Chemical mapping of a 207-nucleotide RNA with DMS and 2A3.
RNA sequence: GGGAACGACUCGAGUAGAGUCGAAAAAGUACGUUUCGACGUACUGGUAGGCGUACUACCCAGACAUGUUGUGAUGCUACCCACCAAUAUCCCAAAUAGGAUAUUGAGGCAUCCAACAACAGCUGGGUAUCGCAGUUGCGAACCUUUCGAGGUUCAACCUAAGGAUCUGCUUCGGCAGAUCCUUAGGAAAAGAAACAACAACAACAAC
Reactivity to DMS in 0.01 (KOAc 150mM, MgCl2 10mM, bicine 150mM(pH8.5), 24C), signal-to-noise 1, nucleotides 027 to 156: a070g050u040a010c000g000u030u000u020c250g000a180c020g010u010a030c010u010g020g000u020a110g010g000c050g070u000a140c100u000a070c000c000c010a070g050a050c060a130u000g000u000u000g000u000g000a030u000g010c020u000a070c010c020c010a300c110c030a000a000u010a020u000c000c000c040a060a190a190u010a050g000g010a010u000a010u000u000g000a110g010g000c000a010u000c000c050a030a000c000a000a010c090a020g040c000u000g040g010g000u010a000u000c010g000c010a140g000u000u010g010c030g000a000a030c000c030u010u000u000c200g000a020g010g000u010u000c020a000a270
Reactivity to 2A3 in 0.01 (KOAc 150mM, MgCl2 10mM, bicine 150mM(pH8.5), 24C), signal-to-noise 1, nucleotides 027 to 156: a000g010u010a020c040g000u040u030u300c260g180a020c000g030u010a030c010u000g000g080u070a080g000g060c010g010u090a190c030u020a000c000c000c000a010g050a130c170a290u100g040u000u000g050u090g000a000u000g000c050u010a150c030c070c030a050c000c000a010a000u000a000u000c060c010c030a250a130a120u300a150g010g000a000u000a000u010u000g000a000g000g020c000a000u010c030c000a000a030c000a000a000c020a000g050c000u030g120g090g000u000a000u300c000g000c010a080g000u090u070g090c060g000a020a020c000c000u070u090u200c300g020a000g020g000u000u000c010a010a010